[RMDB]
RNA sequence: GGGAACGACUCGAGUAGAGUCGAAAAGAGAUGGCCUGGUUGCUGAAGACGCCAUAUUCCGUCUCCCUUUACCGAUGUGCCCCUUCUUGGGGCCAGGCCGUCGGCUGAUGAGGUUAGGGACUAACCAUCGAAAGAAGCACUUCGGUGCUUCUUUCGAAAAAGAAACAACAACAACAAC
Reactivity to 2A3 in 0.01 (KOAc 150mM, MgCl2 10mM, bicine 150mM(pH8.5), 24C), signal-to-noise 1, nucleotides 027 to 126: g080a000g000a010u020g020g000c000c060u000g000g030u120u150g130c030u060g050a100a030g040a040c020g000c000c000a030u000a050u190u060c010c020g000u000c010u010c000c000c000u010u090u040a100c030c080g030a030u040g000u160g080c000c000c000c000u010u270c010u170u210g030g050g000g010c000c010a000g030g000c020c020g070u040c020g000g050c020u130g000a160u060g040a020g130g000u010u010a030g000g020g010a010c000u000a000a000c010c000a010
Reactivity to DMS in 0.01 (KOAc 150mM, MgCl2 10mM, bicine 150mM(pH8.5), 24C), signal-to-noise 2, nucleotides 027 to 126: g020a180g000a000u000g000g010c170c040u020g000g010u000u000g030c050u020g010a060a070g010a140c270g020c120c060a070u000a070u000u000c050c030g000u000c050u010c010c000c010u000u030u010a160c080c040g000a120u030g000u020g000c080c020c020c010u000u030c150u010u000g000g000g000g020c040c000a000g000g000c000c020g010u010c020g000g000c030u030g000a050u030g010a140g010g010u000u000a030g000g010g000a210c130u000a000a040c060c030a160
An RNA of 177 nucleotides, treated with 2A3 and DMS and read out base by base. It was measured as part of the RMDB libraries RFM100 and RFMREP. 2A3 adducts were read by reverse transcription with SuperScript II with manganese.